[RMDB]
RNA sequence: GGGAACGACUCGAGUAGAGUCGAAAAUUGACUGUGACGUAGACGGCGAUUGAGCAGCUAAUAACGUCCCGGCGAUCGCGUGCCGGAGUUGUAACUGCUCGAAGAAGAGAACUUGUACGACGGCUCGUAGCGGAAGCCGCUCGUUUUGCGCGGCGUAAGGGUACCGUCCUUUCGAGGACGGUACCCUAAAAGAAACAACAACAACAAC
Reactivity to 2A3 in 0.01 (KOAc 150mM, MgCl2 10mM, bicine 150mM(pH8.5), 24C), signal-to-noise 1, nucleotides 027 to 156: u020u020g040a020c010u000g030u120g070a020c030g030u020a100g050a020c010g030g020c050g040a110u010u130g000a020g040c000a000g000c010u060a060a080u080a000a070c030g100u130c100c000c000g000g000c070g110a200u300c070g050c010g240u100g000c000c000g000g010a000g040u000u000g010u010a060a020c000u000g000c000u000c020g060a030a030g030a000a030g030a000g000a060a120c030u040u050g070u050a020c060g000a000c000g030g000c010u040c000g050u030a030g060c040g040g030a010a010g000c000c000g010c040u030c000g040u000u040u100u150g040c020g000c000g040g040c000g030u090a020
Source information:
An RNA of 207 nucleotides, treated with 2A3 and read out base by base. For 2A3, 653 sequencing reads were counted. For 2A3 the reverse transcriptase was SuperScript II with manganese. The reactions ran in a buffer of 150 mM KOAc, 10 mM MgCl2 and 150 mM bicine (pH 8.5), at 24 C.